[RMDB]
RNA sequence: GGGAACGACUCGAGUAGAGUCGAAAAACUUGAGAUGCGAACCACUCCGCUCACGACUACCCAGCCAAGACAUGACGGCGGGAAGGGGCGAGGGGUCCCAGCCUAGCCACAGCAAUAGUCCAAUGUCGAAUCGGCCGUGCAGAAGUGGACCCAGCCGUAGAUAAGGAUGGUUCGCCAUCCUUAUCUAAAAAGAAACAACAACAACAAC
Reactivity to DMS in 0.01 (KOAc 150mM, MgCl2 10mM, bicine 150mM(pH8.5), 24C), signal-to-noise 2, nucleotides 027 to 156: a080c030u010u000g020a050g030a110u000g030c050g030a120a120c020c020a050c040u010c000c030g000c050u010c010a060c040g000a140c030u020a070c010c030c020a170g000c020c020a110a140g000a170c040a220u030g020a070c070g010g040c050g000g000g020a110a110g000g010g030g000c020g020a100g040g000g020g010u010c010c000c020a260g010c030c030u000a060g010c010c030a050c060a110g000c020a080a070u010a060g000u000c020c070a080a090u000g020u010c050g010a080a080u010c080g020g020c010c030g010u020g000c110a070g010a080a140g020u010g000g010a150c060c020c000a090g050c030c010g000
Reactivity to 2A3 in 0.01 (KOAc 150mM, MgCl2 10mM, bicine 150mM(pH8.5), 24C), signal-to-noise 4, nucleotides 027 to 156: a000c040u110u140g020a050g030a080u150g030c060g040a020a040c000c010a040c040u010c010c080g030c040u040c000a100c050g110a070c050u170a120c010c000c040a000g020c020c000a100a040g050a090c040a050u150g000a030c050g000g010c010g010g000g000a040a100g050g010g010g000c000g010a100g030g030g020g000u020c000c000c000a030g000c010c000u080a060g020c040c010a060c050a060g090c000a060a170u050a110g050u040c030c030a110a070u080g020u080c040g060a050a090u110c030g020g010c010c020g070u070g040c030a030g020a200a000g040u060g030g020a000c010c020c020a030g050c010c010g090